[RMDB]
RNA sequence: GGGAACGACUCGAGUAGAGUCGAAAACGAACCGAACCGUGACAUGCUCCGCUUCGAUGGCAAUUGCGGUAUCAGAGGCAGGCGCGCGCGGCGGAAUAUGUAUUUCCCUAUGGCCCCGCCGCUGUUACAUGCUGACUGACUUCGGUCAGUCAGCAUGAAAAGAAACAACAACAACAAC
Reactivity to DMS in 0.01 (KOAc 150mM, MgCl2 10mM, bicine 150mM(pH8.5), 24C), signal-to-noise 1, nucleotides 027 to 126: c060g000a130a130c060c080g030a040a100c140c020g020u000g050a010c110a130u000g000c020u000c050c020g010c140u000u010c020g010a080u010g000g030c070a080a210u000u030g000c110g050g020u010a100u000c030a140g000a070g020g040c000a070g020g000c120g000c090g010c120g000c030g000g030c000g000g000a050a040u000a080u000g000u010a100u030u000u000c010c000c000u000a100u000g030g000c150c050c020c050g040c040c050g000c050u000g050u010u010a130
Reactivity to 2A3 in 0.01 (KOAc 150mM, MgCl2 10mM, bicine 150mM(pH8.5), 24C), signal-to-noise 1, nucleotides 027 to 126: c000g060a030a040c020c010g050a070a050c050c000g070u020g080a050c070a160u090g060c050u000c000c070g040c030u060u040c080g220a250u060g090g040c060a120a250u140u100g000c030g170g000u080a200u070c070a010g000a050g090g020c060a050g030g030c100g000c000g000c030g000c000g000g000c010g000g050a090a100u120a040u140g100u000a050u040u040u060c000c010c020u020a090u160g090g000c020c010c000c020g060c000c000g090c030u010g000u010u040a050
Structure probing data (DMS and 2A3) for a 177-nucleotide construct. It was measured as part of the RMDB library OK2TST. 2A3 adducts were read by reverse transcription with SuperScript II with manganese. Conditions: 150 mM KOAc, 10 mM MgCl2 and 150 mM bicine (pH 8.5), 24 C. For 2A3, 768 sequencing reads were counted.